[RMDB]
RNA sequence: GGGAACGACUCGAGUAGAGUCGAAAACAUGCCAUGAGAUCUACUCGUCUGAUCCAUGGACACGGUACAGUACACUAGAUGAUGAUCGGUACUGAUCUACGUGCGUACGAUCCGCUAGCGUGCUAUCCACGUUGGGACCUUUCGAGGUCCCAACGUGAAAAGAAACAACAACAACAAC
Reactivity to DMS in 0.01 (KOAc 150mM, MgCl2 10mM, bicine 150mM(pH8.5), 24C), signal-to-noise 1, nucleotides 027 to 126: c070a120u010g020c000c020a020u000g040a180g020a030u000c000u000a130c080u020c270g000u020c170u000g010a010u000c010c020a050u000g000g010a100c030a020c100g000g010u000a060c160a050g000u000a000c000a030c000u000a010g010a050u000g000a170u000g000a060u000c000g040g040u000a050c000u000g020a050u050c090u010a080c250g020u000g020c030g050u000a070c010g000a040u000c000c030g010c000u000a040g000c050g010u000g000c010u000a110u020c030
Reactivity to 2A3 in 0.01 (KOAc 150mM, MgCl2 10mM, bicine 150mM(pH8.5), 24C), signal-to-noise 3, nucleotides 027 to 126: c030a000u110g050c010c000a020u060g040a080g000a300u000c010u070a110c090u110c160g300u090c240u100g000a000u000c020c000a000u000g000g010a020c030a020c070g050g010u090a100c020a070g020u050a000c010a000c000u030a040g060a300u160g010a140u050g000a010u030c010g050g100u050a040c030u110g040a050u040c060u140a070c110g130u120g040c030g010u020a050c000g000a010u010c020c010g000c020u000a000g020c000g020u020g080c000u010a030u060c050
The record gives the reactivity of an RNA of 177 nucleotides to DMS and 2A3. Conditions: 150 mM KOAc, 10 mM MgCl2 and 150 mM bicine (pH 8.5), 24 C. Reactivities are given for positions 27 through 126. For 2A3 the reverse transcriptase was SuperScript II with manganese. It was measured as part of the RMDB library OK2TRN.